[RMDB]
RNA sequence: GGGAACGACUCGAGUAGAGUCGAAAAUUUUGUAGACGAGGAGGAUAGUGAUCGAAUCAGAUCGGCGGAUGCUAUCCCGGAUGUGGCACAUUCGUUAGCUUAUUAAGUAAAUCAUUAAGGUGACUUACUGAAACACUUAGUUCGCUAAGUGUUUCAGAAAAGAAACAACAACAACAAC
Reactivity to DMS in 0.01 (KOAc 150mM, MgCl2 10mM, bicine 150mM(pH8.5), 24C), signal-to-noise 3, nucleotides 027 to 126: u000u010u000u000g000u010a100g000a110c050g010a090g030g000a100g010g000a050u000a020g010u000g000a040u000c020g020a100a160u020c240a110g010a060u000c030g000g000c090g000g010a040u000g000c020u000a050u000c000c010c040g010g010a030u010g020u000g010g010c160a240c050a030u010u000c050g000u000u000a070g000c030u000u010a080u000u000a070a050g000u000a040a040a060u010c060a050u000u000a060a070g010g010u000g000a090c050u000u000a100
Reactivity to 2A3 in 0.01 (KOAc 150mM, MgCl2 10mM, bicine 150mM(pH8.5), 24C), signal-to-noise 2, nucleotides 027 to 126: u030u040u040u080g030u020a060g010a080c060g010a020g080g010a020g010g000a030u020a050g070u060g070a050u030c010g040a040a100u110c040a080g050a080u050c000g040g030c050g060g010a030u080g010c000u010a010u060c030c000c000g040g000a040u060g050u130g100g010c070a000c010a060u030u000c010g050u040u030a030g000c000u060u050a060u180u070a150a040g040u020a000a040a090u090c040a020u010u090a080a030g080g000u020g020a040c030u010u050a020